[RMDB]
RNA sequence: GGGAACGACUCGAGUAGAGUCGAAAAUUGUACACACCGCCCGUCACGUCAUGGGAGCCGAGGGUGCCCGAAGCCGCCACGAUUCAGUGGUGUCCACGGCAAGAUCGGUGACUGGGACGAAGUCGUACUUGGAAUGGUGGUUCGCCACCAUUCCAAGAAAAGAAACAACAACAACAAC
Reactivity to DMS in 0.01 (KOAc 150mM, MgCl2 10mM, bicine 150mM(pH8.5), 24C), signal-to-noise 3, nucleotides 027 to 126: u000u010g040u010a050c030a130c050a130c060c080g000c010c030c030g000u040c130a090c040g020u000c020a070u000g000g000g000a300g000c000c030g000a060g010g000g000u000g000c020c000c010g000a120a100g010c150c000g000c010c030a030c080g020a150u000u050c190a170g000u000g000g010u000g000u000c000c010a300c300g000g000c000a030a050g010a060u040c000g010g000u000g000a220c070u000g000g000g000a010c020g000a030a080g010u000c000g020u010a110
Reactivity to 2A3 in 0.01 (KOAc 150mM, MgCl2 10mM, bicine 150mM(pH8.5), 24C), signal-to-noise 3, nucleotides 027 to 126: u160u080g080u070a000c020a010c000a020c050c010g050c030c030c000g060u070c010a020c030g010u030c050a070u080g000g000g050a020g000c000c020g010a050g030g070g030u050g000c000c000c000g000a010a000g010c000c010g000c010c000a010c000g080a100u300u300c050a040g000u000g010g000u000g000u010c020c000a010c020g010g050c000a000a000g080a090u000c000g000g000u010g030a000c010u010g030g030g050a020c000g010a090a020g080u070c090g020u030a090
Structure probing data (DMS and 2A3) for a 177-nucleotide construct.
For DMS, 2,342 sequencing reads were counted.
The reactions ran in a buffer of 150 mM KOAc, 10 mM MgCl2 and 150 mM bicine (pH 8.5), at 24 C.
For 2A3 the reverse transcriptase was SuperScript II with manganese.